[RMDB]
RNA sequence: GGGAACGACUCGAGUAGAGUCGAAAAGAUCGGCGUGGCGUUUCAGUGUCCCCUUAGUGUGCUUGCUGGCGGGGCUGCUGCUGGCCGCCACGCAUGGGGUGUCGGGCGGCACCGAGAUCCGCCGCAGCGGGGUUCAAGUCUUCGGACUUGAACCCCGAAAAGAAACAACAACAACAAC
Reactivity to 2A3 in 0.01 (KOAc 150mM, MgCl2 10mM, bicine 150mM(pH8.5), 24C), signal-to-noise 1, nucleotides 027 to 126: g040a070u060c020g050g000c070g030u110g000g000c030g100u070u250u180c000a010g030u030g050u070c000c000c000c000u050u120a040g020u070g150u220g060c030u170u160g000c000u090g010g010c150g030g030g000g000c050u080g010c000u060g030c030u030g110g020c050c020g050c000c000a000c000g000c010a000u120g000g070g020g000u020g090u140c190g040g100g030c030g000g030c040a000c000c000g010a040g000a120u040c000c000g000c000c000g000c100a030g040